[RMDB]
RNA sequence: GGGAACGACUCGAGUAGAGUCGAAAAUGUCGCUCAUCCAGCUGUUCAUCGAUCAAAGGAAGUGGAAGAUCGUCGAAUACCUCUGUCAGAGGGUUCUCGAGUACGGAGAGAAUCGGUUUGCACUCCACCUAUACCAAGGGUUCGCCCUUGGUAUAGGAAAAGAAACAACAACAACAAC
Reactivity to DMS in 0.01 (KOAc 150mM, MgCl2 10mM, bicine 150mM(pH8.5), 24C), signal-to-noise 6, nucleotides 027 to 126: u000g010u000c070g010c040u000c030a100u000c040c040a090g010c070u010g010u010u000c040a090u000c070g010a070u010c080a060a110a140g010g000a060a060g020u000g010g000a100a110g010a050u000c020g000u000c090g000a060a060u000a140c050c010u000c020u010g010u010c140a110g010a050g010g010g010u010u000c020u000c010g010a110g010u010a070c120g010g000a080g020a070g000a070a070u010c040g010g000u000u000u000g010c080a090c040u000c030c040a230
Reactivity to 2A3 in 0.01 (KOAc 150mM, MgCl2 10mM, bicine 150mM(pH8.5), 24C), signal-to-noise 5, nucleotides 027 to 126: u060g030u020c020g020c020u010c020a080u050c030c040a020g040c050u070g050u080u050c020a080u050c060g080a030u020c080a120a040a050g050g020a090a070g050u040g020g040a060a040g020a080u020c000g040u020c030g040a040a050u100a290c000c010u020c020u070g190u130c050a030g010a020g060g030g010u050u050c020u010c020g020a050g030u070a070c080g040g020a030g010a010g020a060a050u050c030g050g030u030u070u080g030c030a030c030u020c010c000a060
Conditions: 150 mM KOAc, 10 mM MgCl2 and 150 mM bicine (pH 8.5), 24 C. Chemical mapping of a 177-nucleotide RNA with DMS and 2A3. For 2A3, 6,777 sequencing reads were counted. DMS adducts were read by reverse transcription with MarathonRT.